[RMDB]
RNA sequence: GGGAACGACUCGAGUAGAGUCGAAAAGUGUACCAAACUAUCCAGGACUGCGAACGUUCAGCAGAAAACGAUGCAGCUAAGCAAAAAUGUGCUCUCGAUUACCAGAACGCAUUAGCUCAGAAUAAAACGCAAUAUGAAGGUUCGCCUUCAUAUUGCGAAAAGAAACAACAACAACAAC
Reactivity to DMS in 0.01 (KOAc 150mM, MgCl2 10mM, bicine 150mM(pH8.5), 24C), signal-to-noise 2, nucleotides 027 to 126: g000u000g030u000a210c070c090a040a120a090c020u040a170u000c070c040a120g000g040a120c070u000g000c070g030a050a120c080g030u000u000c030a070g020c080a090g040a040a070a160a020c060g000a110u010g000c120a040g000c020u000a040a000g000c020a030a030a050a100a050u000g020u040g000c040u010c030u000c150g030a080u030u000a100c120c050a080g020a070a020c020g010c010a010u000u000a110g000c040u000c080a070g010a060a110u000a020a070a040a190
Reactivity to 2A3 in 0.01 (KOAc 150mM, MgCl2 10mM, bicine 150mM(pH8.5), 24C), signal-to-noise 1, nucleotides 027 to 126: g040u060g060u060a080c040c000a030a090a090c040u050a010u090c020c030a060g080g070a080c000u030g000c020g090a140a040c030g100u070u050c060a090g010c030a040g040a080a050a010a020c030g000a020u140g030c030a010g000c030u070a050a000g000c030a150a000a000a150a000u020g020u020g000c000u030c000u020c030g170a190u030u190a060c060c040a010g000a050a030c030g000c030a020u050u000a000g000c000u000c050a010g070a170a040u160a150a060a010a030
Source: RMDB library OK2TST, as collected in RNAgym.
An RNA of 177 nucleotides, treated with DMS and 2A3 and read out base by base.
Reactivities are given for positions 27 through 126.
The RNA was probed in 150 mM KOAc, 10 mM MgCl2 and 150 mM bicine (pH 8.5) at 24 C.
For 2A3, 1,367 sequencing reads were counted.